RNA sequence: GGGAACGACUCGAGUAGAGUCGAAAAGAGCAGCUAUGGUAACAUUAUCAAGCUUGGUCACCUCGAAGACAUGGACAUGGAGAGUAAGGAGAUGAUGUUCCACUUCGGUCAGGUUAUGGAGUUGGUUCCAUUUGAAGCACCGUCUGCUGUGAUCAAGUCUGACUUAUUGGUUCGCCAAUAAGUCAGAAAAAGAAACAACAACAACAAC
Reactivity to 2A3 in 0.01 (KOAc 150mM, MgCl2 10mM, bicine 150mM(pH8.5), 24C), signal-to-noise 4, nucleotides 027 to 156: g020a010g000c030a000g000c020u070a030u190g020g030u110a060a060c030a120u070u070a050u140c040a090a040g060c020u020u040g030g010u060c030a020c040c020u050c030g050a040a020g030a030c060a080u140g000g010a000c000a040u030g020g070a090g010a020g110u140a050a050g050g060a080g020a010u110g010a010u030g030u060u000c000c010a030c010u040u030c030g010g020u020c030a020g070g000u040u030a010u050g000g010a030g020u140u110g050g040u170u000c020c010a020u050u030u180g070a040a000g030c060a010c040c010g030u040c070u060g000c010u020g020u020g000a030u050c030a000a050g060
Reactivity to DMS in 0.01 (KOAc 150mM, MgCl2 10mM, bicine 150mM(pH8.5), 24C), signal-to-noise 2, nucleotides 027 to 156: g030a110g000c010a050g050c060u010a060u010g000g030u000a040a050c050a060u010u000a080u020c040a080a150g050c020u000u000g020g010u000c010a060c000c020u000c060g040a150a060g030a080c080a130u000g000g020a100c100a170u000g020g020a170g000a120g040u020a020a150g000g010a160g010a070u030g020a120u000g000u000u000c060c020a080c040u000u000c040g040g000u000c040a110g030g040u000u000a050u000g040g000a120g060u000u010g000g000u000u010c010c000a110u000u020u010g030a100a070g000c000a100c030c090g020u000c030u000g020c090u010g010u010g000a090u030c050a070a050g020